[RMDB]
Chemical mapping of a 177-nucleotide RNA with DMS and 2A3. The reactions ran in a buffer of 150 mM KOAc, 10 mM MgCl2 and 150 mM bicine (pH 8.5), at 24 C. For DMS, 3,042 sequencing reads were counted. For DMS the reverse transcriptase was MarathonRT.
RNA sequence: GGGAACGACUCGAGUAGAGUCGAAAAUGCGAGUGCCUCAAAGCGUUUUAGGGACUGGUCCGGGAGCGCUAUGCCUUCCGACACCAUACUUCUACAACACUAUCCCUGCCACUCUCAGAAUCACAGACUUGCUCAAGUGAUUCGUCACUUGAGCAAGAAAAGAAACAACAACAACAAC
Reactivity to DMS in 0.01 (KOAc 150mM, MgCl2 10mM, bicine 150mM(pH8.5), 24C), signal-to-noise 3, nucleotides 027 to 126: u000g030c080g000a070g010u020g000c090c000u040c120a070a080a090g000c160g000u000u000u010u000a030g010g010g000a190c170u000g010g020u030c070c030g010g020g010a040g000c210g000c220u050a120u060g020c070c010u040u040c000c000g020a080c300a050c010c010a040u030a120c000u020u010c050u010a040c140a090a060c020a050c100u000a080u010c010c010c010u000g020c110c000a050c020u000c050u010c030a040g000a120a080u030c050a020c050a030g010a140
Reactivity to 2A3 in 0.01 (KOAc 150mM, MgCl2 10mM, bicine 150mM(pH8.5), 24C), signal-to-noise 6, nucleotides 027 to 126: u170g040c050g010a020g040u060g030c020c020u140c040a100a130a020g050c050g010u010u020u010u080a070g030g020g020a070c080u030g000g010u000c030c000g010g010g000a030g020c080g030c140u150a130u300g000c000c000u010u000c010c010g020a010c010a020c050c000a020u050a110c040u110u050c010u040a040c010a090a010c010a020c050u060a060u110c030c000c000u030g030c030c000a030c000u010c010u020c010a040g060a160a080u100c020a050c030a070g050a040